[RMDB]
RNA sequence: GGGAACGACUCGAGUAGAGUCGAAAAGUGAUAUAUGAGUAUCAAUUUUGAUUUUAGAUGGCUAACUUUAUGGCCGAAUUUGUUUAUAGUUCUUGAAAAAAGGCUAAGGUAGAUUAAUUUCAAAAUACCUACAUAAUCUAUUCGUAGAUUAUGUAGGAAAAGAAACAACAACAACAAC
Reactivity to 2A3 in 0.01 (KOAc 150mM, MgCl2 10mM, bicine 150mM(pH8.5), 24C), signal-to-noise 3, nucleotides 027 to 126: g020u010g010a010u000a020u030a040u160g100a060g130u010a000u050c000a040a020u030u030u050u050g020a040u020u010u000u090a150g020a180u140g020g020c020u020a040a050c060u250u290u210a150u230g000g010c000c000g010a010a020u020u020u040g010u020u060u010a250u020a080g010u110u230c010u040u030g090a140a120a040a010a070a010g000g000c010u010a010a020g050g020u030a000g000a040u040u070a010a040u010u060u020c000a010a020a010a040u080a070
Reactivity to DMS in 0.01 (KOAc 150mM, MgCl2 10mM, bicine 150mM(pH8.5), 24C), signal-to-noise 4, nucleotides 027 to 126: g000u000g000a010u000a010u000a140u010g010a110g030u000a000u000c000a140a040u000u000u000u000g000a020u000u000u000u000a080g010a110u010g010g000c010u010a050a170c210u010u010u010a070u020g010g020c010c000g010a080a030u000u000u000g010u000u000u010a120u000a030g010u000u010c020u000u010g000a000a060a110a100a040a050g000g000c010u010a010a050g000g020u000a030g010a030u000u000a030a020u000u010u010c000a010a030a040a030u000a160
Background
The record gives the reactivity of an RNA of 177 nucleotides to 2A3 and DMS. The RNA was probed in 150 mM KOAc, 10 mM MgCl2 and 150 mM bicine (pH 8.5) at 24 C. For 2A3, 2,687 sequencing reads were counted.